[RMDB]
RNA sequence: GGGAACGACUCGAGUAGAGUCGAAAAACUCCGGGAAACCGGGGCUAAUACCGGAUAACAUUUUGAACCGCAUGGUUCGAAAUUGAAAGGCGGCUUCGGCUGUCACUUAUGGAUGGACCCGCGUCGCAGACUAUAGCAGAUUCGUCUGCUAUAGUCUAAAAGAAACAACAACAACAAC
Reactivity to 2A3 in 0.01 (KOAc 150mM, MgCl2 10mM, bicine 150mM(pH8.5), 24C), signal-to-noise 9, nucleotides 027 to 126: a000c010u000c010c000g000g000g010a040a030a010c000c000g010g000g010g000c010u040a070a030u060a140c010c000g010g010a110u110a150a080c030a040u020u010u000u020g000a010a000c010c010g110c300a150u300g000g000u010u000c000g000a000a010a000u040u080g070a100a080a040g070g000c010g010g000c010u110u110c100g070g000c030u050g010u030c020a040c100u190u190a100u280g100g010a040u030g040g020a080c010c010c000g020c020g040u030c020g000c030
Reactivity to DMS in 0.01 (KOAc 150mM, MgCl2 10mM, bicine 150mM(pH8.5), 24C), signal-to-noise 8, nucleotides 027 to 126: a190c010u000c000c010g010g010g010a090a130a140c000c000g000g000g000g010c020u010a060a080u010a120c020c010g000g010a160u020a100a190c100a030u010u010u000u000g000a010a000c000c000g000c300a090u060g010g010u010u000c000g010a000a000a010u010u010g000a090a110a100g000g000c010g000g000c010u000u020c140g000g020c040u010g000u010c010a030c100u020u020a080u020g010g010a100u010g000g000a090c030c000c010g010c300g010u020c060g010c120